[RMDB]
RNA sequence: GGGAACGACUCGAGUAGAGUCGAAAAAAACGGGUUUAUAUUCCCGUACCGCGGUGGUAGGUGCGGCAACGCAAGCCCGAGGGGUGACGCCUCGGGGUAGGCGGACCGGUCCACAAGGCCGGCUAAGCGUAUAAGCCCGGGGAGUGCCGUAAUGGCGGAGAUACGAGAUGUUCGCAUCUCGUAUCUCAAAAGAAACAACAACAACAAC
Reactivity to 2A3 in 0.01 (KOAc 150mM, MgCl2 10mM, bicine 150mM(pH8.5), 24C), signal-to-noise 1, nucleotides 027 to 156: a000a000a040c030g000g000g000u030u040u000a060u000a020u060u030c050c000c000g020u010a010c010c010g010c000g000g110u210g120g030u160a190g000g000u020g020c000g040g000c050a120a050c020g000c030a000a050g030c000c000c000g000a000g010g010g020g080u250g080a070c120g050c050c010u000c010g000g000g010g020u020a020g120g010c020g020g010a050c020c010g010g010u020c000c020a080c060a300a130g020g010c010c010g000g000c010u050a080a030g070c090g000u010a000u000a020a060g000c000c000c000g000g030g000g020a080g000u140g000c000c020g020u150a110a110u250g010g000c020g000